[RMDB]
The data come from the RNA Mapping Database (RMDB), library M2PK50.
An RNA of 177 nucleotides, treated with DMS and 2A3 and read out base by base.
Reactivities are given for positions 27 through 126.
DMS adducts were read by reverse transcription with MarathonRT.
For DMS, 2,383 sequencing reads were counted.
For 2A3 the reverse transcriptase was SuperScript II with manganese.
The reactions ran in a buffer of 150 mM KOAc, 10 mM MgCl2 and 150 mM bicine (pH 8.5), at 24 C.
For 2A3, 11,072 sequencing reads were counted.

RNA sequence: GGGAACGACUCGAGUAGAGUCGAAAAUCCAUAAGGUUCGCCUUAUGGAAAAAGCGGCCAGCUCCAGGCCGCAAAAAUAAAUGGAGCACUAGACGAAAGUCAAAACAGUACUCUUCGGAGUACUGAAGUAAGUAUAUUUGUUCGCAAAUAUACUUACAAAAGAAACAACAACAACAAC
Reactivity to DMS in 0.01 (KOAc 150mM, MgCl2 10mM, bicine 150mM(pH8.5), 24C), signal-to-noise 2, nucleotides 027 to 126: u010c000c000a010u010a010a020g000g010u000u010c240g020c000c000u000u020a010u000g000g010a000a030a050a130a080g000c010g000g010c000c020a060g030c010u000c000c010a020g000g010c000c010g000c010a000a010a060a050a000u000a010a030a110u000g000g010a010g010c010a120c240u000a070g010a020c010g000a100a090a120g010u000c000a090a060a080a190c010a000g000u000a000c010u000c000u000u020c130g020g020a020g010u000a000c000u000g000a030a100
Reactivity to 2A3 in 0.01 (KOAc 150mM, MgCl2 10mM, bicine 150mM(pH8.5), 24C), signal-to-noise 3, nucleotides 027 to 126: u000c000c000a000u010a000a000g030g010u010u120c170g110c020c000u000u000a000u010g000g000a100a020a000a010a000g000c010g010g000c000c000a020g000c000u000c000c010a000g000g000c000c000g000c010a030a030a000a010a010u050a000a010a010u010g000g000a000g010c010a010c040u090a040g000a010c010g040a110a050a000g000u010c000a010a050a040a030c010a000g000u010a000c000u010c020u040u150c260g080g000a000g000u010a000c000u000g000a040a010